This 177-nucleotide RNA was probed chemically with DMS and 2A3. For 2A3, 1,670 sequencing reads were counted. Reactivities are given for positions 27 through 126. The RNA was probed in 150 mM KOAc, 10 mM MgCl2 and 150 mM bicine (pH 8.5) at 24 C. For DMS the reverse transcriptase was MarathonRT.

[RMDB]
RNA sequence: GGGAACGACUCGAGUAGAGUCGAAAAGCGAGCCGACGCUCUGUGCGAACCUCAGGGAGAUCGCCGAGGAGAUACGCCCGCUCGUGGAAGGUGUCGGGGCGGAGGUAGUGCUCCUGACCAACUCGACUCGAUAUUCCGCAUUCGUGCGGAAUAUCGAAAAAGAAACAACAACAACAAC
Reactivity to DMS in 0.01 (KOAc 150mM, MgCl2 10mM, bicine 150mM(pH8.5), 24C), signal-to-noise 2, nucleotides 027 to 126: g000c030g000a130g020c020c110g030a120c110g020c030u010c000u000g010u000g040c050g000a040a120c060c010u010c140a140g010g000g010a040g010a080u000c030g020c010c040g000a120g010g000a020g000a090u020a200c170g020c010c010c140g000c040u000c060g020u010g010g040a080a110g020g000u020g010u000c030g000g010g040g030c060g010g020a110g020g010u000a120g000u000g000c030u000c010c030u000g010a120c030c050a160a140c050u000c030g030a100c110
Reactivity to 2A3 in 0.01 (KOAc 150mM, MgCl2 10mM, bicine 150mM(pH8.5), 24C), signal-to-noise 2, nucleotides 027 to 126: g010c000g010a010g010c000c040g020a010c050g030c000u000c010u020g210u120g020c000g010a060a060c020c010u060c090a170g070g100g070a190g040a130u070c030g000c050c020g060a090g090g040a060g000a020u170a050c040g010c000c030c000g020c030u030c010g110u160g060g100a080a070g140g040u080g010u120c060g020g000g010g020c000g010g040a060g030g050u110a080g080u050g110c000u000c010c020u090g110a130c060c030a000a110c020u050c030g050a030c010